[RMDB]
RNA sequence: GGGAACGACUCGAGUAGAGUCGAAAAGAUAUGGAUCAGGGUAAAGUUGUCAAUCGUUGAAAUCGGAAACGAUGGAGAUUGUCAAUAUACCUGAUCCUAAGUCAAAACUGUGAGUUCGCUCACAGAACACACGCUAACCCUUCGGGGUUAGCGUGUGAAAAGAAACAACAACAACAAC
Reactivity to 2A3 in 0.01 (KOAc 150mM, MgCl2 10mM, bicine 150mM(pH8.5), 24C), signal-to-noise 1, nucleotides 027 to 126: g000a000u050a030u100g000g000a010u000c030a030g010g000g090u300a300a300a280g120u260u030g020u030c010a000a030u000c000g300u300u060g000a010a090a020u040c010g000g010a070a000a040c030g020a010u000g030g000a000g020a000u000u010g030u000c030a050a000u140a030u080a120c000c000u020g010a000u010c000c000u000a020a030g030u000c000a010a000a110a200c000u000g030u010g000a010g000u150u300c300g030c130u000c010a010c000a000g020a020a020
Chemical mapping of a 177-nucleotide RNA with 2A3. As a SHAPE reagent, 2A3 marks flexible, mostly unpaired nucleotides at the ribose 2'-OH. The RNA was probed in 150 mM KOAc, 10 mM MgCl2 and 150 mM bicine (pH 8.5) at 24 C. 2A3 adducts were read by reverse transcription with SuperScript II with manganese.